[RMDB]
RNA sequence: GGGAACGACUCGAGUAGAGUCGAAAAGAAGCAGUAACUGAGCAAGCCAUAGUUCCAAUGAACACUGGUGAUGAAAUGGUGCAGGCAACUGCUCAAGUACUUCAAACAAAGAGGGGAAGGGUAACAGAAAGAUCUGAAAGAGCAGAGAGUAAUAUACGAACAGGGAAAAGUUCGCUUUUCCCUGUUCAAAAGAAACAACAACAACAAC
Reactivity to 2A3 in 0.01 (KOAc 150mM, MgCl2 10mM, bicine 150mM(pH8.5), 24C), signal-to-noise 3, nucleotides 027 to 156: g100a050a000g000c040a030g000u030a040a010c020u020g010a000g000c030a140a070g020c020c010a090u090a100g060u020u040c030c070a060a140u120g070a120a020c070a020c100u100g050g050u090g040a150u050g030a020a030a070u070g010g000u030g000c010a020g010g010c030a100a050c040u020g000c000u000c010a000a010g010u030a010c000u000u060c010a050a100a110c040a040a080a000g030a030g020g020g010g010a000a020g020g000g020u060a100a010c010a010g040a020a060a000g040a000u020c010u080g030a100a080a030g030a030g030c020a000g040a000g000a010g050u090a060a110u150a040u090a190c120
Reactivity to DMS in 0.01 (KOAc 150mM, MgCl2 10mM, bicine 150mM(pH8.5), 24C), signal-to-noise 2, nucleotides 027 to 156: g000a040a060g070c010a050g090u010a040a110c030u010g000a100g030c020a110a280g050c020c090a030u000a150g000u000u020c020c110a080a190u000g020a100a050c050a120c100u020g020g020u010g010a120u000g000a120a080a130u010g020g010u020g020c000a080g030g000c050a050a080c050u000g010c030u000c010a010a160g000u000a020c020u000u000c050a040a120a140c080a050a100a040g000a130g010g030g000g030a050a060g010g090g000u010a060a120c070a090g010a020a080a060g010a050u010c010u000g000a030a070a160g030a060g030c000a070g020a100g000a060g040u000a050a060u000a150u000a110c200

The data come from the RNA Mapping Database (RMDB), library OK3TST. Chemical mapping of a 207-nucleotide RNA with 2A3 and DMS. For DMS the reverse transcriptase was MarathonRT. For 2A3 the reverse transcriptase was SuperScript II with manganese. The reactions ran in a buffer of 150 mM KOAc, 10 mM MgCl2 and 150 mM bicine (pH 8.5), at 24 C. Reactivities are given for positions 27 through 156.